The record gives the reactivity of an RNA of 177 nucleotides to 2A3 and DMS. The data come from the RNA Mapping Database (RMDB), library M2PK50. Conditions: 150 mM KOAc, 10 mM MgCl2 and 150 mM bicine (pH 8.5), 24 C. The 2A3 profile rests on 2,711 reads. The DMS profile rests on 1,006 reads.

RNA sequence: GGGAACGACUCGAGUAGAGUCGAAAAGCACUCCUUUUCGAAGGAGUGCCCAGGCGCGCGGCCUUUGUCCUCUCGCGUGUGCGCCGCGCGCGAUAUACGCGCAUCUGUGCAUAUUCGUAUGCACAAACCUCAUCAGGGUAUUCGUACCCUGAUGAGGAAAAGAAACAACAACAACAAC
Reactivity to 2A3 in 0.01 (KOAc 150mM, MgCl2 10mM, bicine 150mM(pH8.5), 24C), signal-to-noise 1, nucleotides 027 to 126: g010c000a000c000u000c000c020u040u040u020u110c200g070a020a000g000g000a010g000u000g000c000c000c000a050g070g000c010g000c020g000c000g050g020c040c000u090u180u280g060u050c010c020u030c000u010c050g000c020g010u000g010u010g020c030g000c000c000g000c010g000c000g000c010g010a000u030a000u020a020c010g000c000g030c030a070u040c070u090g000u000g000c020a020u020a030u060u120c210g080u040a010u010g000c000a000c000a000a050a000
Reactivity to DMS in 0.01 (KOAc 150mM, MgCl2 10mM, bicine 150mM(pH8.5), 24C), signal-to-noise 1, nucleotides 027 to 126: g000c010a020c000u000c000c000u000u010u000u020c220g010a000a000g020g010a030g010u000g000c000c050c110a090g000g000c000g000c010g030c010g000g030c000c070u010u000u040g000u000c110c030u000c070u000c080g010c020g020u000g020u000g020c060g000c030c000g030c000g000c000g030c000g030a000u000a050u000a030c020g020c010g030c090a130u000c240u010g010u000g020c010a010u000a050u000u010c130g020u010a000u000g010c000a020c000a040a070a130